[RMDB]
RNA sequence: GGGAACGACUCGAGUAGAGUCGAAAACGAUCUGUUCGCAGAUCGAGCUACGGAGACGUAGCAAAGCGCGCGAGGGCCCGGGCGCGCGCCCUCCAAGAAAUAAAACCAUAUCCACGUGUGCUAGGAUAUGGCCGGGCCCAAAGAAACAGCACACGAAGAAAAUAAUUACGUUCGCGUAAUUAUUUUCAAAAGAAACAACAACAACAAC
Reactivity to 2A3 in 0.01 (KOAc 150mM, MgCl2 10mM, bicine 150mM(pH8.5), 24C), signal-to-noise 1, nucleotides 027 to 156: c010g000a000u010c000u040g070u110u160c270g020c100a010g010a020u010c010g010a010g000c000u000a010c000g030g020a050g010a070c010g000u010a000g010c010a000a120a030g000c000g000c000g000c000g020a050g010g000g000c000c010c040g010g010g020c010g000c000g000c010g010c000c000c010u080c020c010a050a040g190a150a120a030u230a070a090a060a060c000c000a000u000a000u010c010c020a050c140g010u010g000u000g000c020u030a000g000g000a000u000a000u010g000g000c000c010g000g040g030c000c000c000a000a000a000g000a000a040a030c080a000g000c000a000c010a000c020g020a060a070